[RMDB]
RNA sequence: GGGAACGACUCGAGUAGAGUCGAAAACUACCAAACGGUCGACCUAGAGAAGUGAAAGGAUUGUUCGGCUACAGGACGGUUUCGAACCAUCGACCCAUGGUGAUAUCACAGCUGAACCUCUUACGACCCACCUCGGACGGUUCGCCGUCCGAGGUGGAAAAGAAACAACAACAACAAC
Reactivity to 2A3 in 0.01 (KOAc 150mM, MgCl2 10mM, bicine 150mM(pH8.5), 24C), signal-to-noise 2, nucleotides 027 to 126: c060u060a130c000c000a000a080a170c070g100g000u000c010g070a120c000c170u120a020g030a060g030a300a200g020u200g090a020a250a000g040g010a050u030u160g000u060u020c000g000g000c000u090a090c060a060g240g000a000c000g010g000u000u070u300c010g000a000a020c020c000a000u000c000g040a190c000c020c020a000u290g110g000u000g010a050u060a000u060c070a070c000a030g000c030u070g050a000a000c050c000u070c050u000u080a040c100g050a150c080